[RMDB]
RNA sequence: GGGAACGACUCGAGUAGAGUCGAAAACCAUGAGACCGUAACUUUCGUAGUCAUUGAUAAAGGGGCAGGUCUCGCUCUUUUGUCAUUGCGGUUGACUAGAGGCAUGGUCGUUUACCGCGACUUUCCAAUACGAAGAGGGCCUUCGGGCCCUCUUCAAUCUAUACAUGCUGUUCGCAGCAUGUAUAGAAAAAGAAACAACAACAACAAC
Reactivity to DMS in 0.01 (KOAc 150mM, MgCl2 10mM, bicine 150mM(pH8.5), 24C), signal-to-noise 1, nucleotides 027 to 156: c040c040a150u010g020a250g020a050c000c100g040u000a050a060c040u000u000u000c130g010u000a090g020u000c040a080u000u000g020a030u010a040a020a020g030g000g030g010c000a080g020g020u000c040u000c050g020c000u020c000u040u000u000u000g000u010c010a070u010u010g010c040g020g000u000u000g000a130c060u000a120g010a090g000g000c030a150u000g020g020u000c010g000u000u000u000a080c140c080g010c010g010a120c080u000u030u000c030c020a050a110u000a130c190g000a040a050g000a030g000g060g010c010c000u010u000c290g040g080g000c010c020c000u000c000u000u000c000a040a120